Annotation: Structure probing data (DMS) for a 177-nucleotide construct. It was measured as part of the RMDB library TTRINS. The RNA was probed in 150 mM KOAc, 10 mM MgCl2 and 150 mM bicine (pH 8.5) at 24 C. For DMS the reverse transcriptase was MarathonRT.
[RMDB]
RNA sequence: GGGAACGACUCGAGUAGAGUCGAAAAGAUAUGGAUCUUUCCAUGACCUUAAGUCUCCGAUAAGCGUAUAUCGGAAACGAUAUGACGCUUUUGACGGAGUCACAGGUCAUGGAAAGAUCCUAAGUCACAAAAUGCUAUCCUUCGGGAUAGCAUUUUGAAAAGAAACAACAACAACAAC
Reactivity to DMS in 0.01 (KOAc 150mM, MgCl2 10mM, bicine 150mM(pH8.5), 24C), signal-to-noise 1, nucleotides 027 to 126: g030a040u000a300u020g020g010a010u000c010u000u020u000c000c000a020u010g000a020c000c000u010u000a190a210g000u000c000u000c010c000g020a170u000a030a040g010c010g010u000a050u000a030u000c000g000g000a190a020a210c030g000a040u000a010u000g000a020c000g000c010u000u000u010u030g000a210c160g000g010a010g020u000c060a040c300a030g000g010u000c000a020u010g010g030a000a010a010g000a000u000c000c000u000a030a070g000u010c000a140